Structure probing data (DMS and 2A3) for a 177-nucleotide construct. The DMS profile rests on 2,111 reads. Reactivities are given for positions 27 through 126. The data come from the RNA Mapping Database (RMDB), library OK1LIB. 2A3 is a SHAPE reagent: it acylates the 2'-hydroxyl of flexible nucleotides of all four kinds. The RNA was probed in 150 mM KOAc, 10 mM MgCl2 and 150 mM bicine (pH 8.5) at 24 C.
[RMDB]
RNA sequence: GGGAACGACUCGAGUAGAGUCGAAAAAGCGGCUUGGCGCGUGAGCCGCGCCGCGGGCCCCGGCUGCCGGUACAGAACAUCCGGGCGCUGUAGGGGAGUUUGACGGGGAUCUUGCUCGGUCCGGCGCCUUCGGACGUUAAUUCGUUAACGUCCGAAGAAAAGAAACAACAACAACAAC
Reactivity to DMS in 0.01 (KOAc 150mM, MgCl2 10mM, bicine 150mM(pH8.5), 24C), signal-to-noise 2, nucleotides 027 to 126: a080g000c030g010g000c000u000u000g000g060c000g030c180g030u050g040a110g050c010c040g040c250g000c010c000g010c050g000g010g020c020c020c000c060g010g030c020u000g000c040c020g000g030u040a050c200a070g000a110a170c140a120u020c040c010g010g000g000c150g020c030u000g000u010a090g010g000g010g000a060g000u000u020u040g000a070c070g000g000g020g020a060u000c060u000u010g010c020u000c040g010g000u010c070c020g000g010c030g000c050
Reactivity to 2A3 in 0.01 (KOAc 150mM, MgCl2 10mM, bicine 150mM(pH8.5), 24C), signal-to-noise 2, nucleotides 027 to 126: a000g000c000g010g020c010u090u130g030g000c000g000c080g160u120g080a020g030c020c030g000c010g000c000c000g000c000g000g050g020c000c000c000c000g000g000c060u160g050c010c010g110g000u090a110c080a110g070a170a020c020a080u050c060c020g030g010g000c000g010c030u060g020u120a050g010g030g030g010a050g020u000u160u110g130a060c050g000g000g030g010a060u020c040u110u100g000c010u040c080g010g050u050c010c000g020g000c020g040c010